[RMDB]
RNA sequence: GGGAACGACUCGAGUAGAGUCGAAAAGUUGAUAGCUACUAUUCUUAUUUGAUGCCUGUGCUCUCAAUGACCGAUUGUCUGGCCGCUGAGACACAUAGGGAUUGUGAUUUUAAUAAACCACUCAUUGCUUAGAUGAUGUGUUCGCACAUCAUCUAAGAAAAGAAACAACAACAACAAC
Reactivity to DMS in 0.01 (KOAc 150mM, MgCl2 10mM, bicine 150mM(pH8.5), 24C), signal-to-noise 3, nucleotides 027 to 126: g010u000u000g010a110u000a080g010c040u000a090c120u000a060u000u010c030u000u000a080u000u000u000g000a050u000g010c010c050u010g020u000g010c300u000c000u000c010a010a040u000g010a030c010c000g010a120u010u010g030u000c150u010g040g030c000c000g020c070u000g000a040g000a030c100a020c010a070u000a020g010g010g010a040u000u000g010u000g010a030u000u000u000u000a040a110u010a040a050a100c040c030a030c090u000c090a080u000u000g010
Reactivity to 2A3 in 0.01 (KOAc 150mM, MgCl2 10mM, bicine 150mM(pH8.5), 24C), signal-to-noise 3, nucleotides 027 to 126: g090u080u050g080a090u130a090g070c040u050a020c020u020a040u080u030c030u080u130a170u140u080u160g040a030u070g060c010c000u000g000u030g010c000u000c000u000c000a010a020u030g020a050c010c010g060a080u060u270g110u160c080u130g000g010c010c000g000c010u000g000a000g000a010c010a000c000a010u050a030g010g000g010a020u030u040g060u010g020a040u060u060u060u010a070a080u070a030a060a010c040c030a060c010u070c020a090u060u230g010